[RMDB]
RNA sequence: GGGAACGACUCGAGUAGAGUCGAAAAUCUUUCAACGUCUCCAGAAUGGAUUCCAUGAAGUGUUGUUCUUGUUCAGAACUAGUGGUUUGUAUAAUUUCAUGGUUACACCAUUUCUAUGAAAGAUGUAGUAGUGGCAUAAUUUCGAUUAUGCCACUACAAAAGAAACAACAACAACAAC
Reactivity to DMS in 0.01 (KOAc 150mM, MgCl2 10mM, bicine 150mM(pH8.5), 24C), signal-to-noise 3, nucleotides 027 to 126: u000c010u000u010u000c000a050a130c210g000u000c040u010c040c110a130g000a020a010u000g010g000a240u010u000c000c000a010u000g010a010a010g010u000g010u010u000g010u000u000c010u000u020g020u010u010c200a060g010a030a020c020u010a100g040u010g020g020u010u020u010g020u010a100u010a090a030u000u000u000c010a000u000g000g010u000u010a110c300a060c000c000a020u000u000u000c020u000a080u010g010a030a010a020g010a010u000g010u010a130
Reactivity to 2A3 in 0.01 (KOAc 150mM, MgCl2 10mM, bicine 150mM(pH8.5), 24C), signal-to-noise 3, nucleotides 027 to 126: u010c000u010u020u030c030a130a190c110g150u000c070u040c050c000a010g020a010a000u020g030g000a050u120u000c020c000a000u000g020a030a000g030u030g060u290u110g030u050u010c010u110u150g190u200u170c120a020g010a020a010c030u040a100g130u080g240g120u130u260u180g200u080a160u010a080a120u000u000u000c000a000u010g000g010u030u030a040c080a000c060c000a010u030u100u040c010u030a080u060g000a020a010a000g000a010u020g010u020a040